[RMDB]
RNA sequence: GGGAACGACUCGAGUAGAGUCGAAAAGCCGACGCCGCGGUGGGCGCGCGAGCCGCUGUUCGAGAAGGCCGUGACGCCGAGCGACGUCGGCAAGCUCAACCGCCUCGUGGUGCCCAAGCAGCAGGCCGAUUACACAGGGAUUCGUCCCUGUGUAAUCAAAAGAAACAACAACAACAAC
Reactivity to 2A3 in 0.01 (KOAc 150mM, MgCl2 10mM, bicine 150mM(pH8.5), 24C), signal-to-noise 5, nucleotides 027 to 126: g010c000c010g000a000c010g010c020c010g010c040g090g300u220g190g050g000c010g000c000g000c000g030a110g000c010c010g020c090u120g110u280u250c100g050a050g020a260a110g030g000c000c010g010u020g040a120c010g000c010c000g000a000g000c010g000a000c000g000u000c010g000g000c010a000a000g010c000u020c020a030a050c010c040g010c010c020u050c080g050u060g050g020u080g030c000c010c000a040a040g030c020a010g000c000a000g030g020c020c050
Reactivity to DMS in 0.01 (KOAc 150mM, MgCl2 10mM, bicine 150mM(pH8.5), 24C), signal-to-noise 5, nucleotides 027 to 126: g010c000c000g010a030c020g020c000c000g010c010g000g030u010g010g010g020c000g020c040g010c000g010a130g020c010c020g010c090u000g000u010u000c160g000a080g010a130a170g000g000c000c000g000u000g000a140c020g010c000c010g010a210g020c020g020a010c010g010u000c010g000g010c000a000a010g000c020u010c060a070a080c100c080g000c020c020u000c070g020u010g000g000u010g000c010c000c020a110a090g010c080a100g010c060a080g010g010c050c190

This 177-nucleotide RNA was probed chemically with 2A3 and DMS.
Conditions: 150 mM KOAc, 10 mM MgCl2 and 150 mM bicine (pH 8.5), 24 C.
The data come from the RNA Mapping Database (RMDB), library OK2TRN.
For DMS the reverse transcriptase was MarathonRT.